Source: RMDB library M2RFPK, as collected in RNAgym. This 207-nucleotide RNA was probed chemically with 2A3 and DMS. For 2A3, 5,149 sequencing reads were counted. For DMS, 5,935 sequencing reads were counted. DMS adducts were read by reverse transcription with MarathonRT. The reactions ran in a buffer of 150 mM KOAc, 10 mM MgCl2 and 150 mM bicine (pH 8.5), at 24 C.
RNA sequence: GGGAACGACUCGAGUAGAGUCGAAAAGGCUGCGUACCACUCUAGGGUACGUGAUAGUGCGAUAUAAGAAGCACUGGUACAUGCCGGCAGGGACAGUUAAGAGAUGGCCGCAGUCUCGUGUCCCUGCAAAAGGAGUUCUCGUUCGCGAGAACUCCAAGUUAAUACACAGCUUCGGCUGUGUAUUAACAAAAGAAACAACAACAACAAC
Reactivity to 2A3 in 0.01 (KOAc 150mM, MgCl2 10mM, bicine 150mM(pH8.5), 24C), signal-to-noise 5, nucleotides 027 to 156: g010g000c000u020g000c030g000u010a000c000c010a110c090u190c110u210a110g080g010g030u010a010c010g000u010g020a040u090a020g000u000g010c040g020a030u020a020u070a300a090g140a100a010g000c000a000c000u020g010g040u130a100c070a060u140g030c010c000g030g000c000a010g000g000g000a000c000a060g030u140u150a180a030g050a000g000a010u040g080g080c090c050g030c080a020g020u020c000u000c010g010u010g000u010c000c000c000u000g000c000a000a000a010a000g000g000a000g000u010u010c010u000c000g010u030u040c210g020c010g120a000g000a000a000c000u000c000c000a000a000
Reactivity to DMS in 0.01 (KOAc 150mM, MgCl2 10mM, bicine 150mM(pH8.5), 24C), signal-to-noise 3, nucleotides 027 to 156: g040g010c010u000g000c010g020u000a020c000c010a200c190u010c160u010a210g030g030g030u000a000c010g020u000g010a070u010a010g010u000g010c000g000a190u000a150u010a150a160g010a290a300g030c010a030c000u010g030g030u000a080c070a110u000g020c000c020g000g000c000a040g010g000g010a030c010a060g020u000u010a100a100g010a020g010a050u000g000g020c100c170g000c150a240g030u010c000u000c000g010u010g030u000c010c010c000u000g000c030a000a020a030a100g000g000a030g010u000u000c000u010c000g050u000u010c280g030c010g000a050g000a010a000c000u010c010c000a010a050